[RMDB]
RNA sequence: GGGAACGACUCGAGUAGAGUCGAAAAUUAAAACAAUAGGUACUAUUGGAGAUUCUGUCGCUAAAGGUACUGGUGCUAAAACUAACUUUACUCAAAUGUUAGCUAAGAAGAUAAAGGCUAAAUCAACAAACUUAGCUGUUAGUGGUGCGACAAUGAAGAUAAUUACUGCCUUCGGGCAGUAAUUAUCAAAAGAAACAACAACAACAAC
Reactivity to 2A3 in 0.01 (KOAc 150mM, MgCl2 10mM, bicine 150mM(pH8.5), 24C), signal-to-noise 2, nucleotides 027 to 156: u070u040a020a000a020a070c040a030a040u090a090g080g000u070a070c040u060a070u040u090g050g020a100g010a120u100u000c040u090g040u050c010g040c050u150a140a040a000g050g000u010a050c030u030g020g000u070g010c010u040a090a110a010a000c010u010a000a000c030u020u120u110a120c020u070c090a060a140a000u090g000u040u010a010g000c010u020a050a030g010a060a000g020a140u130a060a090a000g010g040c050u070a020a020a070u160c010a020a110c040a130a160a040c010u000u010a010g000c010u000g010u040u000a030g020u030g090g010u070g010c000g000a000c040a010a010u180g080a080a050
Reactivity to DMS in 0.01 (KOAc 150mM, MgCl2 10mM, bicine 150mM(pH8.5), 24C), signal-to-noise 1, nucleotides 027 to 156: u000u010a090a060a130a160c060a090a150u000a150g010g000u020a010c020u000a220u000u000g000g030a100g000a020u010u000c170u000g010u000c000g060c050u000a010a070a300g000g010u000a000c030u000g020g020u000g020c030u000a030a110a060a080c000u000a000a020c040u000u000u000a110c130u000c150a020a080a050u000g000u000u000a000g010c030u000a070a100g020a080a100g000a160u000a080a040a080g050g040c080u000a010a050a090u000c030a090a120c060a060a150a040c070u000u000a040g010c000u000g000u010u000a070g010u000g030g060u000g000c000g000a120c050a110a070u000g030a100a190